This 177-nucleotide RNA was probed chemically with 2A3 and DMS.
Conditions: 150 mM KOAc, 10 mM MgCl2 and 150 mM bicine (pH 8.5), 24 C.
The 2A3 profile rests on 2,983 reads.
For DMS, 2,294 sequencing reads were counted.
RNA sequence: GGGAACGACUCGAGUAGAGUCGAAAAGAUAUGGAGACAGCUUUUGACGGAGCCUACUCGGAAACGAGUAGUCUCCGAUAAGCUGCUCCUAAGUCAAAAGCUACUAGGGCUUCGGCCCUAGUAGCAACAUGUGGUAGUUCUUCGGAACUACCACAUGAAAAGAAACAACAACAACAAC
Reactivity to 2A3 in 0.01 (KOAc 150mM, MgCl2 10mM, bicine 150mM(pH8.5), 24C), signal-to-noise 2, nucleotides 027 to 126: g020a010u070a020u120g010g040a010g040a140c010a010g020c000u100u130u210u300g250a230c140g010g010a000g000c000c010u010a010c010u000c010g010g020a050a020a020c000g010a010g010u000a000g010u020c000u000c010c010g010a010u000a000a000g000c010u000g020c010u000c000c000u000a060a000g020u010c000a030a070a020a110g000c000u010a000c000u020a010g030g010g000c010u070u110c300g120g040c030c000c000u000a010g000u000a000g000c000a010a010
Reactivity to DMS in 0.01 (KOAc 150mM, MgCl2 10mM, bicine 150mM(pH8.5), 24C), signal-to-noise 2, nucleotides 027 to 126: g010a040u000a290u010g000g000a020g000a160c020a030g010c000u000u000u000u000g010a170c110g010g010a010g000c080c010u000a000c010u010c010g010g000a100a060a140c010g010a020g000u000a000g000u000c010u010c000c000g030a010u000a010a000g000c010u000g000c000u000c010c000u010a010a080g010u010c020a100a070a130a150g000c000u000a000c000u000a010g000g030g000c000u000u010c210g020g000c000c010c000u000a000g010u000a000g020c010a030a030